Overview:
Structure probing data (DMS and 2A3) for a 177-nucleotide construct. Conditions: 150 mM KOAc, 10 mM MgCl2 and 150 mM bicine (pH 8.5), 24 C. DMS adducts were read by reverse transcription with MarathonRT. The DMS profile rests on 710 reads. For 2A3, 1,296 sequencing reads were counted.
[RMDB]
RNA sequence: GGGAACGACUCGAGUAGAGUCGAAAAUCUUUGAUCUCCUGAAGGAGGAAGGAGCUCUCGAGCGCUCUCCCGCCCCUCGGAUGGGCCGCUUCCGGCGAACGAGCCCGAAGAGCGAGUGGGGGAGAACCCUAGAGGAAUGGUUCGCCAUUCCUCUAGGAAAAGAAACAACAACAACAAC
Reactivity to DMS in 0.01 (KOAc 150mM, MgCl2 10mM, bicine 150mM(pH8.5), 24C), signal-to-noise 1, nucleotides 027 to 126: u030c030u000u000u000g040a090u000c000u000c000c010u000g030a110a160g010g000a090g010g010a150a080g010g010a080g000c060u000c000u010c080g000a070g010c300g000c000u000c000u000c020c030c020g000c000c020c030c010u010c010g010g010a300u000g000g000g030c000c030g010c140u000u000c060c060g000g010c070g000a040a040c010g000a160g000c030c000c020g020a300a290g010a020g000c110g020a010g030u000g020g010g010g000g000a020g010a060a040c130
Reactivity to 2A3 in 0.01 (KOAc 150mM, MgCl2 10mM, bicine 150mM(pH8.5), 24C), signal-to-noise 1, nucleotides 027 to 126: u020c010u020u000u110g030a100u060c000u030c010c030u110g110a130a160g080g070a040g000g030a050a010g000g010a010g020c000u000c000u010c020g030a020g040c090g020c000u000c010u010c000c000c000g030c000c010c000c000u000c000g010g050a040u090g060g010g000c000c000g000c020u080u040c040c060g130g000c060g040a030a010c010g010a040g000c000c000c000g000a010a010g000a000g000c020g020a030g000u010g000g000g000g000g010a000g000a000a000c000